[RMDB]
RNA sequence: GGGAACGACUCGAGUAGAGUCGAAAAUAAACAAAUAGAAUGGUAGAAAAGAACGUCUAGACGACGCCAUCUACCAAGUUAGUAAAUAUAUCGGCGUAGUGAGACAAAAAGAAACAAAACAAAACAACAUUAUAUCGCUAUUCGUAGCGAUAUAAUGAAAAGAAACAACAACAACAAC
Reactivity to DMS in 0.01 (KOAc 150mM, MgCl2 10mM, bicine 150mM(pH8.5), 24C), signal-to-noise 5, nucleotides 027 to 126: u050a080a070a100c070a090a060a130u050a070g000a110a090u000g000g000u010a010g000a040a070a080a080g000a100a180c080g000u000c000u030a060g010a160c140g010a020c000g000c070c020a070u010c010u010a000c030c000a040a110g020u000u030a110g010u030a050a050a100u040a110u030a070u030c050g000g000c020g000u000a060g010u010g000a020g010a070c070a050a050a040a030a030g010a120a040a060c150a070a080a060a030c180a080a050a060a090c180a060a170
Reactivity to 2A3 in 0.01 (KOAc 150mM, MgCl2 10mM, bicine 150mM(pH8.5), 24C), signal-to-noise 7, nucleotides 027 to 126: u200a000a060a010c070a020a080a020u160a020g190a100a100u030g010g010u000a010g030a020a170a020a020g100a080a050c030g000u000c010u030a100g050a180c100g000a000c000g020c010c000a020u000c000u000a000c000c010a000a000g010u010u040a030g020u050a020a070a080u170a030u040a050u180c080g020g000c020g030u010a020g040u050g090a030g010a020c090a020a090a020a010a010g150a040a040a010c040a030a090a020a000c050a030a070a020a000c090a040a000
The record gives the reactivity of an RNA of 177 nucleotides to DMS and 2A3.
The reactions ran in a buffer of 150 mM KOAc, 10 mM MgCl2 and 150 mM bicine (pH 8.5), at 24 C.
For 2A3 the reverse transcriptase was SuperScript II with manganese.
2A3 is a SHAPE reagent: it acylates the 2'-hydroxyl of flexible nucleotides of all four kinds.
For DMS, 8,264 sequencing reads were counted.
Source: RMDB library OK1LIB, as collected in RNAgym.
Values cover nucleotides 27 to 126.